Description: Chemical mapping of a 177-nucleotide RNA with 2A3. Source: RMDB library OK1LIB, as collected in RNAgym. The 2A3 profile rests on 1,553 reads. Conditions: 150 mM KOAc, 10 mM MgCl2 and 150 mM bicine (pH 8.5), 24 C.

RNA sequence: GGGAACGACUCGAGUAGAGUCGAAAACGAUGAUUAUUAAAAAUUUAAUGAAAGUAUCUGCCGUAGCAAUUACAAGCAAAAAUGAAAUCUUAUCGCAUGUAGGUGCAGGUAGUGAUCAUCACAUACCGAUCCCCACUUAGUUCGCUAAGUGGGGAUCAAAAGAAACAACAACAACAAC
Reactivity to 2A3 in 0.01 (KOAc 150mM, MgCl2 10mM, bicine 150mM(pH8.5), 24C), signal-to-noise 4, nucleotides 027 to 126: c090g000a000u030g010a000u020u180a110u060u210a080a050a050a020a110u230u300u300a200a180u110g050a140a010a000g040u050a040u030c000u020g010c010c040g130u200a010g000c000a020a040u060u000a020c000a080a000g020c030a000a080a070a090a030u200g070a160a230a040u070c040u070u180a100u180c120g000c020a010u000g000u000a010g070g010u010g010c000a010g000g040u010a000g000u010g010a000u000c000a000u040c000a000c020a070u130a070c000c010